Source information:
Structure probing data (DMS and 2A3) for a 177-nucleotide construct. The reactions ran in a buffer of 150 mM KOAc, 10 mM MgCl2 and 150 mM bicine (pH 8.5), at 24 C. It was measured as part of the RMDB libraries RFM100 and RFMREP. 2A3 adducts were read by reverse transcription with SuperScript II with manganese.
RNA sequence: GGGAACGACUCGAGUAGAGUCGAAAACAUUUGCGCAUUCUUUGACCAAGAAUAGUCAGCAAAUUGUAUUUUCAAUCAAUGCAGACCAUUUGUUUCAGAUUCGGAGAUUUUUUGCUGCCAAACGGAAUCGCACAUUUAAAUUCGUUUAAAUGUGCGAAAAAGAAACAACAACAACAAC
Reactivity to DMS in 0.01 (KOAc 150mM, MgCl2 10mM, bicine 150mM(pH8.5), 24C), signal-to-noise 6, nucleotides 027 to 126: c060a070u000u010u020g020c050g000c080a070u000u000c010u010u000u020g010a170c280c090a070a040g000a040a020u010a120g010u010c060a080g010c000a000a020a010u020u020g010u000a060u010u000u000u000c040a060a070u010c080a080a100u020g010c070a060g000a120c100c140a090u010u020u010g000u000u010u000c050a110g000a120u000u000c090g010g000a050g000a020u000u000u010u000u010u000g000c030u000g000c040c070a050a050a090c090g000g010a130a130
Reactivity to 2A3 in 0.01 (KOAc 150mM, MgCl2 10mM, bicine 150mM(pH8.5), 24C), signal-to-noise 9, nucleotides 027 to 126: c020a020u030u040u070g010c050g010c010a020u020u000c010u030u020u140g070a070c020c040a020a000g000a020a020u120a090g110u210c080a030g000c000a020a040a000u060u120g040u050a130u030u050u010u040c030a030a050u030c030a060a080u120g030c020a030g060a130c030c020a100u040u070u140g060u010u070u040c040a040g010a120u020u050c040g050g010a060g020a110u020u020u010u010u100u160g030c020u060g030c010c010a050a080a040c070g080g020a020a050